About this RNA
An RNA of 207 nucleotides, treated with 2A3 and DMS and read out base by base. The reactions ran in a buffer of 150 mM KOAc, 10 mM MgCl2 and 150 mM bicine (pH 8.5), at 24 C. For DMS, 7,361 sequencing reads were counted. For 2A3, 6,778 sequencing reads were counted.

RNA sequence: GGGAACGACUCGAGUAGAGUCGAAAACUGAGUUAGAGUCUCUGAAUGUCCCAUUAUACGUUUUUUGCUAGACCCUUCUGUUCCUCUCUGGUAAAGCAGAGUGUUUGGACCAUACCAGUGGUUCUAACCUGGCAACCUCACACAUUUUGUGCAUCAGCUACAUGACAAAGUUCGCUUUGUCAUGUAGAAAAGAAACAACAACAACAAC
Reactivity to 2A3 in 0.01 (KOAc 150mM, MgCl2 10mM, bicine 150mM(pH8.5), 24C), signal-to-noise 7, nucleotides 027 to 156: c020u030g020a000g050u060u110a070g010a060g120u020c010u000c010u050g090a200a080u090g050u030c010c010c020a030u180u150a080u030a050c060g030u090u040u020u010u090u120g040c020u020a030g040a110c020c030c000u090u080c070u110g050u060u030c010c010u070c010u030c050u090g010g040u130a100a050a010g070c020a020g020a020g060u070g050u020u040u040g000g000a010c010c020a020u060a130c030c060a060g030u010g020g000u010u000c010u020a010a030c000c010u010g010g000c030a050a050c010c020u070c010a040c010a020c010a110u050u090u110u170g040u060g040c040a070u080c020a060g020
Reactivity to DMS in 0.01 (KOAc 150mM, MgCl2 10mM, bicine 150mM(pH8.5), 24C), signal-to-noise 3, nucleotides 027 to 156: c030u010g000a080g000u010u030a080g000a240g010u000c020u000c030u020g010a120a080u000g010u000c020c010c020a180u020u000a110u000a060c090g000u000u000u000u000u000u000g030c010u000a090g000a090c020c020c020u020u000c070u000g000u000u000c020c020u000c100u000c030u010g020g010u000a040a070a150g020c020a080g010a060g030u000g010u020u010u010g010g010a040c030c040a140u000a090c110c070a100g010u010g010g010u000u010c040u000a050a090c070c010u010g020g020c010a090a070c030c000u000c040a060c090a040c080a120u000u000u000u000g030u030g000c130a090u000c020a100g000